[RMDB]
RNA sequence: GGGAACGACUCGAGUAGAGUCGAAAACAGCAAAAAGGAACCGAUUCCCACCAAAUUCGGAAAGAGAUACCGGGCGAGGCGCUGAAGAAAGAAUCUCGCUUCAGACACCCCAAGGACUCGACUGAAGAAUGCACGCCAUCGUUCGCGAUGGCGUGAACUAGUAAUCCUAGUUCGCUAGGAUUACUAGAAAAGAAACAACAACAACAAC
Reactivity to 2A3 in 0.01 (KOAc 150mM, MgCl2 10mM, bicine 150mM(pH8.5), 24C), signal-to-noise 3, nucleotides 027 to 156: c020a000g100c040a000a090a060a080a040g150g030a070a040c060c030g020a120u030u010c010c000c000a020c030c040a070a110a090u060u030c020g000g030a060a150a020g000a010g000a030u040a110c020c020g010g010g020c120g030a080g000g090c200g000c110u020g010a020a000g010a030a300a020g060a110a130u100c130u090c250g030c020u010u000c000a010g040a050c000a080c020c020c020c030a000a060g000g000a010c020u010c010g030a020c010u010g010a040a020g050a100a050u170g000c010a000c000g000c000c000a010u000c000g050u060u080c210g020c010g060a000u000g000g000c000g000u000g000a000a000
Reactivity to DMS in 0.01 (KOAc 150mM, MgCl2 10mM, bicine 150mM(pH8.5), 24C), signal-to-noise 1, nucleotides 027 to 156: c030a120g030c040a000a090a060a090a050g000g010a100a190c060c060g000a180u000u000c010c000c000a180c040c080a080a050a220u000u060c000g020g020a100a160a120g000a050g000a190u000a060c010c030g000g000g000c050g000a100g000g010c010g030c040u000g010a020a010g000a060a030a080g010a210a040u000c040u010c120g030c020u010u000c000a010g020a300c040a030c000c000c020c000a030a040g000g000a150c040u000c000g010a140c070u000g010a090a120g000a060a070u020g000c010a030c000g000c000c000a010u000c010g050u000u020c250g000c060g000a000u000g000g040c000g030u010g000a000a020
Record summary
This 207-nucleotide RNA was probed chemically with 2A3 and DMS. Reactivities are given for positions 27 through 156. For DMS, 2,101 sequencing reads were counted. The 2A3 profile rests on 2,253 reads. DMS adducts were read by reverse transcription with MarathonRT. For 2A3 the reverse transcriptase was SuperScript II with manganese. The data come from the RNA Mapping Database (RMDB), library M2RFPK.